[RMDB]
RNA sequence: GGGAACGACUCGAGUAGAGUCGAAAAGAUAUGGAACAGGCUCUCUUACUCCACUUACGAGCAAUAUAUCGGAAACGAUAUCAUUGCGAUGAGUAACAUGUGGAGUAAGAGAGCCUGUUCCUAAGUCGAUUCUAAUGCUGUUCGCAGCAUUAGAAUCAAAAGAAACAACAACAACAAC
Reactivity to DMS in 0.01 (KOAc 150mM, MgCl2 10mM, bicine 150mM(pH8.5), 24C), signal-to-noise 2, nucleotides 027 to 126: g000a110u000a300u000g000g000a060a020c000a000g020g020c000u000c000u000c000u000u000a000c020u000c000c000a010c000u000u000a040c030g000a180g040c020a000a010u000a040u000a000u000c010g010g000a190a140a270c000g010a020u020a000u000c260a010u000u000g000c000g020a180u000g000a300g000u000a050a070c300a100u000g030u000g000g020a020g000u000a000a020g000a000g010a000g010c000c010u000g000u010u000c000c000u000a020a120g010u000c100
Chemical mapping of a 177-nucleotide RNA with DMS.
The RNA was probed in 150 mM KOAc, 10 mM MgCl2 and 150 mM bicine (pH 8.5) at 24 C.
DMS adducts were read by reverse transcription with MarathonRT.